The record gives the reactivity of an RNA of 177 nucleotides to 2A3 and DMS. Reactivities are rounded to 0.1 and cut off at 0 and 3. The RNA was probed in 150 mM KOAc, 10 mM MgCl2 and 150 mM bicine (pH 8.5) at 24 C.
RNA sequence: GGGAACGACUCGAGUAGAGUCGAAAAGAUAUGGAGCAUACACAGCGCGAAACGUAUGGUCGGAAACGACCACUACGGAGCUGGUAUGCUCCUAAGUCAAAGGAUUACUUGUUCGCAAGUAAUCCAAGUUGUUACCAACGUUCGCGUUGGUAACAACAAAAGAAACAACAACAACAAC
Reactivity to 2A3 in 0.01 (KOAc 150mM, MgCl2 10mM, bicine 150mM(pH8.5), 24C), signal-to-noise 2, nucleotides 027 to 126: g010a000u020a000u050g000g000a000g080c000a010u030a000c300a010c020a300g020c040g080c220g290a200a010a010c000g010u010a000u010g010g000u010c000g000g000a000a000a000c000g000a000c000c010a000c010u010a010c000g000g030a010g000c010u000g000g000u010a000u000g000c020u000c000c000u000a000a000g000u000c010a000a130a000g000g010a000u000u020a000c000u010u000g030u070u150c300g020c160a010a010g010u040a000a000u000c000c010a000a020
Reactivity to DMS in 0.01 (KOAc 150mM, MgCl2 10mM, bicine 150mM(pH8.5), 24C), signal-to-noise 2, nucleotides 027 to 126: g020a030u000a030u020g000g010a010g020c000a010u000a000c000a150c020a020g040c010g070c230g020a060a040a070c010g020u000a050u010g020g000u010c000g010g010a000a010a020c000g010a000c000c000a000c300u010a000c020g010g000a030g040c000u020g000g010u000a000u000g000c000u030c000c000u000a000a060g000u010c010a140a150a160g030g010a010u000u000a020c000u000u000g000u000u030c220g000c020a020a020g010u010a020a000u000c000c000a010a050